[RMDB]
RNA sequence: GGGAACGACUCGAGUAGAGUCGAAAAGAGUAAAUAGAGGAGUCAGGGUUCGCACCGGCUCCGCGAACCUAGGGUAACACUGACUUUGGAGCGGAAGAGAGAGCAGACGAAGAUACGUCUGCAUAGAGACGUAUGACGUCUUCGGACGUCAUACGUCAAAAGAAACAACAACAACAAC
Reactivity to 2A3 in 0.01 (KOAc 150mM, MgCl2 10mM, bicine 150mM(pH8.5), 24C), signal-to-noise 2, nucleotides 027 to 126: g070a000g050u290a020a030a110u200a060g090a080g120g000a010g030u040c060a020g000g000g000u080u000c010g000c000a000c050c010g120g020c000u030c000c020g020c010g000a000a010c000c020u080a090g050g080g000u030a030a000c070a010c050u030g110a000c000u120u080u070g030g000a000g000c000g000g030a130a050g070a010g000a000g040a010g020c000a000g000a000c020g000a090a030g050a080u150a120c000g000u030c000u000g000c000a000u030a030g010a000
Reactivity to DMS in 0.01 (KOAc 150mM, MgCl2 10mM, bicine 150mM(pH8.5), 24C), signal-to-noise 2, nucleotides 027 to 126: g000a150g000u010a030a060a080u000a100g000a110g020g000a020g000u010c040a150g000g010g020u010u000c040g000c020a150c010c040g000g070c020u000c110c110g000c020g000a060a020c000c050u000a070g000g000g040u000a010a060c150a190c060u000g060a010c030u010u000u010g010g050a050g030c010g010g000a160a060g010a110g000a170g040a190g000c030a030g000a020c000g000a170a100g010a120u040a080c020g010u000c000u000g050c020a010u000a050g000a220